[RMDB]
Chemical mapping of a 177-nucleotide RNA with 2A3 and DMS.
The reactions ran in a buffer of 150 mM KOAc, 10 mM MgCl2 and 150 mM bicine (pH 8.5), at 24 C.
2A3 adducts were read by reverse transcription with SuperScript II with manganese.
DMS adducts were read by reverse transcription with MarathonRT.
DMS (dimethyl sulfate) methylates the pairing face of unpaired adenines and cytosines.

RNA sequence: GGGAACGACUCGAGUAGAGUCGAAAACGUCAGAUGACGAAGUCGGUCCAUCUGCGGUAACAGACCGACAUAGAGUUCGAAGCAGAACGAACAACCGCAGAAACACGAUUGGAGUGUGAAUGAGAGAAAAUGAUGCGCAUUUCGAUGCGCAUCAUUUAAAAGAAACAACAACAACAAC
Reactivity to 2A3 in 0.01 (KOAc 150mM, MgCl2 10mM, bicine 150mM(pH8.5), 24C), signal-to-noise 2, nucleotides 027 to 126: c010g000u000c000a040g040a300u160g000a130c070g000a020a000g020u000c000g060g010u000c050c000a050u040c000u000g000c000g000g000u030a070a000c080a000g020a000c000c000g000a010c040a000u070a000g210a030g000u010u000c020g040a050a000g120c180a000g030a160a040c010g050a000a000c000a030a030c020c000g000c000a000g000a020a100a000c010a000c000g130a090u100u160g230g010a120g060u040g000u020g040a070a080u040g150a060g050a100g020a000
Reactivity to DMS in 0.01 (KOAc 150mM, MgCl2 10mM, bicine 150mM(pH8.5), 24C), signal-to-noise 3, nucleotides 027 to 126: c090g060u000c000a180g070a100u040g020a030c000g000a170a090g000u000c040g000g000u000c000c260a140u000c000u000g000c040g030g010u000a090a150c170a150g000a040c000c030g010a010c010a100u000a220g020a210g000u000u000c030g000a140a100g000c140a210g020a060a060c000g000a030a000c060a210a090c000c000g000c020a010g060a050a170a050c090a030c030g020a190u060u010g000g000a190g000u000g020u010g000a100a070u000g000a120g000a180g020a130
It was measured as part of the RMDB library OK1LIB. For DMS, 2,474 sequencing reads were counted.